Chemical mapping of a 177-nucleotide RNA with 2A3 and DMS.
RNA sequence: GGGAACGACUCGAGUAGAGUCGAAAACAAUCAAGGCCGGCGACAGCUGGUUCCACUCGAAAUGACUCUAAGGUCAGCCUGACUGGAGGUUGGUGGCGGGGUAGAGCACUAAUUGGACGUUUAGGGAUCCGUUAUUGUGGUUCGCCACAAUAACGGAAAAAGAAACAACAACAACAAC
Reactivity to 2A3 in 0.01 (KOAc 150mM, MgCl2 10mM, bicine 150mM(pH8.5), 24C), signal-to-noise 3, nucleotides 027 to 126: c050a040a130u120c040a080a000g050g040c030c000g000g090c030g090a190c110a070g060c010u040g000g000u080u060c050c020a050c000u030c040g100a000a070a030u120g010a030c000u050c070u200a120a000g080g000u000c020a010g030c030c000u100g030a090c030u030g030g060a030g000g080u040u120g000g030u040g010g030c010g000g000g010g010u010a010g000a010g000c060a000c090u110a080a060u040u060g050g040a040c030g010u100u020u100a130g050g100g070a140
Reactivity to DMS in 0.01 (KOAc 150mM, MgCl2 10mM, bicine 150mM(pH8.5), 24C), signal-to-noise 2, nucleotides 027 to 126: c060a110a060u050c080a230a080g000g040c030c010g000g030c040g000a150c300a150g000c000u020g010g000u000u060c040c080a140c090u000c060g040a020a030a120u010g000a120c010u000c170u010a060a140g000g000u000c050a120g010c000c030u040g070a140c050u000g020g000a040g000g000u000u000g000g000u000g060g000c110g010g000g000g000u000a070g000a000g010c160a010c070u000a040a030u000u000g040g000a150c140g010u090u000u030a080g000g050g020a200

Source: RMDB library RFM100, as collected in RNAgym. The reactions ran in a buffer of 150 mM KOAc, 10 mM MgCl2 and 150 mM bicine (pH 8.5), at 24 C. DMS (dimethyl sulfate) methylates the pairing face of unpaired adenines and cytosines. DMS adducts were read by reverse transcription with MarathonRT.